RNA sequence: GGGAACGACUCGAGUAGAGUCGAAAAGCAAGUGAUCGAUCCGGUGGGCACCGCCCCCGGUCUGGUUGUGCCGGGACGGCCAGCGGUGAUGGUGCUUCCCGGGCCACCGCGCGAGCUGCAGCCGAUAGGCCCUAGUGAGUUUCGACUCACUAGGGCCAAAAGAAACAACAACAACAAC
Reactivity to DMS in 0.01 (KOAc 150mM, MgCl2 10mM, bicine 150mM(pH8.5), 24C), signal-to-noise 1, nucleotides 027 to 126: g010c060a040a210g060u000g000a170u000c060g030a080u000c000c010g020g000u000g020g000g000c050a060c090c050g000c040c000c060c020c000g050g010u020c020u000g020g020u000u000g010u000g020c070c050g000g010g030a190c020g000g000c000c040a020g000c040g020g000u000g020a070u010g020g020u000g020c020u000u020c170c000c020g000g020g010c010c050a090c070c000g000c000g040c040g000a300g030c030u010g030c170a140g020c000c010g000a090u010a110